[RMDB]
Chemical mapping of a 177-nucleotide RNA with DMS and 2A3. As a SHAPE reagent, 2A3 marks flexible, mostly unpaired nucleotides at the ribose 2'-OH. For DMS the reverse transcriptase was MarathonRT. The RNA was probed in 150 mM KOAc, 10 mM MgCl2 and 150 mM bicine (pH 8.5) at 24 C.
RNA sequence: GGGAACGACUCGAGUAGAGUCGAAAAAACGCAUUUUCUGCCGAAUUUCUGCUGACGCCCUGGAAAAAGGACGGCAUCCGUGUGCGCGGACGCAUCGAUGCGGAGAUUGUGCAGGCCUGCGUGGUGACUCGGUCACUGAUUUCGAUCAGUGACCGAGAAAAGAAACAACAACAACAAC
Reactivity to DMS in 0.01 (KOAc 150mM, MgCl2 10mM, bicine 150mM(pH8.5), 24C), signal-to-noise 1, nucleotides 027 to 126: a110a000c020g000c000a020u000u000u010u010c020u000g010c000c030g020a060a030u000u000u010c000u000g050c000u000g000a300c060g000c020c010c000u030g020g010a080a070a120a120a010g000g010a030c040g000g000c020a070u000c010c010g040u010g020u010g000c180g030c020g040g000a020c020g010c020a080u020c140g000a060u000g020c000g000g000a010g010a010u000u000g020u010g020c000a010g020g000c300c300u000g000c010g020u000g020g000u010g010a220
Reactivity to 2A3 in 0.01 (KOAc 150mM, MgCl2 10mM, bicine 150mM(pH8.5), 24C), signal-to-noise 1, nucleotides 027 to 126: a010a020c040g000c030a040u050u000u060u060c000u000g000c010c000g080a020a000u000u000u030c010u040g000c050u040g020a050c000g020c000c000c000u030g210g010a110a070a030a000a000g020g000a010c030g050g000c000a030u020c020c000g060u160g090u120g130c300g000c020g070g000a000c030g000c020a050u180c080g170a050u040g010c020g000g000a000g000a000u000u030g020u120g040c000a010g000g000c030c000u010g000c000g010u030g010g080u090g030a050